[RMDB]
RNA sequence: GGGAACGACUCGAGUAGAGUCGAAAAGAUAUGGAUAUCCCAAUGGAGCUAGCCAUCGGAAACGAUGGCAAUAGCGAUGAAAUUGGGAGUAUCCUAAGUCAAAUACAGAACCGUUCGCGGUUCUGUAGUCAUAAUGCAUCUUCGGAUGCAUUAUGACAAAAGAAACAACAACAACAAC
Reactivity to 2A3 in 0.01 (KOAc 150mM, MgCl2 10mM, bicine 150mM(pH8.5), 24C), signal-to-noise 2, nucleotides 027 to 126: g000a000u010a010u060g000g000a000u030a120u100c000c000c000a000a000u060g030g020a140g020c000u020a000g100c000c010a010u000c020g000g000a030a010a000c000g030a000u010g020g000c030a010a030u010a010g000c020g040a060u260g090a040a030a000u000u000g020g040g010a020g110u050a020u000c010c000u000a030a000g010u000c030a150a090a090u090a060c000a010g000a000a000c010c000g000u030u100c300g010c010g080g010u010u000c000u000g000u010a020
Reactivity to DMS in 0.01 (KOAc 150mM, MgCl2 10mM, bicine 150mM(pH8.5), 24C), signal-to-noise 3, nucleotides 027 to 126: g020a010u000a120u000g000g000a030u000a090u000c010c000c010a010a020u000g020g010a090g020c000u000a160g000c000c000a010u010c000g010g000a030a030a060c000g020a010u000g000g000c020a030a030u010a030g030c010g020a130u010g000a050a180a020u000u000g020g010g000a100g010u020a000u000c000c000u000a010a110g000u000c020a100a100a300u000a010c010a010g000a010a020c000c000g030u000u020c220g040c010g020g020u000u010c000u000g000u000a000